[RMDB]
RNA sequence: GGGAACGACUCGAGUAGAGUCGAAAAUGGGCAGACUGGUCACUGUUAACCCUUUUGUUUCAGUGGCCACGGCCAAUGCCAAGGUCCUGAUUGAAUUGGAACCACCUUUUGGAGACUCAUACAUAGUGGUAGGCAGAGGAGAACAACAGAUCAAUCAGUUCAUGACAUCAUUCGUGAUGUCAUGAACAAAAGAAACAACAACAACAAC
Reactivity to DMS in 0.01 (KOAc 150mM, MgCl2 10mM, bicine 150mM(pH8.5), 24C), signal-to-noise 2, nucleotides 027 to 156: u010g020g090g080c020a080g040a050c080u030g000g040u010c010a000c010u000g010u000u030a030a040c020c150c180u000u000u000u000g030u010u000u010c020a020g000u000g030g000c010c010a010c040g000g060c050c010a080a060u010g020c030c020a170a190g030g000u010c030c000u000g020a150u010u000g010a050a300u000u010g000g010a050a070c020c020a070c020c030u010u000u030u000g010g020a240g000a020c040u000c030a140u000a100c060a110u000a110g020u000g010g000u000a080g020g040c050a090g000a100g030g010a210g010a100a040c050a070a070c030a090g040a090u000c050a030a110u010c050a270
Reactivity to 2A3 in 0.01 (KOAc 150mM, MgCl2 10mM, bicine 150mM(pH8.5), 24C), signal-to-noise 4, nucleotides 027 to 156: u070g020g010g020c010a010g010a140c050u020g030g000u000c010a010c010u020g060u130u130a080a110c090c060c040u070u110u110u250g050u000u030u000c000a010g040u000g000g000c030c020a000c000g010g000c050c000a040a040u090g000c010c020a010a040g020g000u030c000c020u060g050a090u070u090g100a150a040u070u060g040g040a050a060c000c000a050c020c060u050u060u080u110g060g000a090g000a040c010u020c110a050u060a170c030a040u130a080g040u030g060g010u020a070g060g000c000a020g020a040g050g000a050g040a040a030c040a040a010c060a020g060a070u080c020a030a030u080c050a040

Structure probing data (DMS and 2A3) for a 207-nucleotide construct. The 2A3 profile rests on 2,420 reads. The data come from the RNA Mapping Database (RMDB), library OK3TST. Conditions: 150 mM KOAc, 10 mM MgCl2 and 150 mM bicine (pH 8.5), 24 C.